Overview: An RNA of 177 nucleotides, treated with DMS and 2A3 and read out base by base. For DMS the reverse transcriptase was MarathonRT. The RNA was probed in 150 mM KOAc, 10 mM MgCl2 and 150 mM bicine (pH 8.5) at 24 C. For DMS, 12,896 sequencing reads were counted. Reactivities are given for positions 27 through 126. The data come from the RNA Mapping Database (RMDB), library RFMREP.

RNA sequence: GGGAACGACUCGAGUAGAGUCGAAAAAGGAGCCGAUGAAGGACGUAGGAGGCUGCGAUAAGCCUCGGGGAGCUGUCAACCGAGCUGAGAUCCGAGGAUGUCCGAAUGGGGAAACCCAGCCACAGUGCGAUAAGUUAAUGUUCGCAUUAACUUAUCGAAAAGAAACAACAACAACAAC
Reactivity to DMS in 0.01 (KOAc 150mM, MgCl2 10mM, bicine 150mM(pH8.5), 24C), signal-to-noise 8, nucleotides 027 to 126: a110g010g010a120g000c030c040g010a070u000g010a160a150g010g010a040c040g010u000a040g010g020a060g010g000c020u000g000c050g000a040u000a040a130g010c010c000u000c010g000g000g000g000a020g020c020u010g000u000c030a070a300c080c040g000a020g010c010u000g000a180g000a030u010c010c000g000a030g000g000a040u000g000u000c020c030g010a070a050u010g000g010g000g010a090a060a120c020c010c010a070g000c060c050a070c150a110g010u010g010
Reactivity to 2A3 in 0.01 (KOAc 150mM, MgCl2 10mM, bicine 150mM(pH8.5), 24C), signal-to-noise 5, nucleotides 027 to 126: a000g070g000a030g040c020c020g030a050u090g060a070a020g030g010a010c010g000u020a010g030g050a040g010g000c010u010g000c020g030a050u010a070a030g020c000c000u000c000g010g010g000g000a020g000c020u000g040u080c020a100a170c150c020g010a010g000c000u160g230a010g000a020u000c000c000g000a010g020g000a020u010g000u000c020c010g010a020a020u070g000g000g000g020a020a030a030c010c000c000a000g020c010c020a120c020a070g110u150g130